RNA sequence: GGGAACGACUCGAGUAGAGUCGAAAAUCACAUCAGUUAGGGUAGCCAUAGUUUCACCCUUUGUAAGUUAAUCUAGGUGAAUUUGCUUAUAUUUCUAGUGGUUAUGGCUAACGUCUAUAUUACGCCCAUAGUGACGGAAAUUCGUUUCCGUCACUAUAAAAGAAACAACAACAACAAC
Reactivity to DMS in 0.01 (KOAc 150mM, MgCl2 10mM, bicine 150mM(pH8.5), 24C), signal-to-noise 4, nucleotides 027 to 126: u000c140a100c150a120u010c160a090g010u010u000a040g000g010g020u000a030g010c000c010a020u000a020g010u010u020u000c040a030c010c170c170u000u000u000g010u000a010a010g000u000u000a030a050u000c040u000a140g020g030u010g010a090a040u000u000u000g010c020u000u010a020u000a020u000u000u010c180u010a090g010u000g010g010u000u000a020u000g000g000c020u000a040a050c040g020u010c020u000a040u000a080u000u010a100c150g000c010c000c010
Reactivity to 2A3 in 0.01 (KOAc 150mM, MgCl2 10mM, bicine 150mM(pH8.5), 24C), signal-to-noise 2, nucleotides 027 to 126: u080c020a010c030a080u140c080a040g060u050u100a050g040g000g000u000a000g000c000c010a000u020a010g050u010u080u180c000a000c000c000c000u040u020u060g030u020a030a010g010u010u050a020a030u000c060u080a110g150g140u140g120a110a060u000u000u040g000c010u020u030a040u020a060u110u100u010c060u080a040g000u000g040g040u020u000a000u000g000g000c000u010a080a010c010g060u000c000u000a060u010a040u090u130a050c080g000c010c000c000

This 177-nucleotide RNA was probed chemically with DMS and 2A3. The DMS profile rests on 3,928 reads. High DMS reactivity at an A or C suggests that its Watson-Crick edge is free.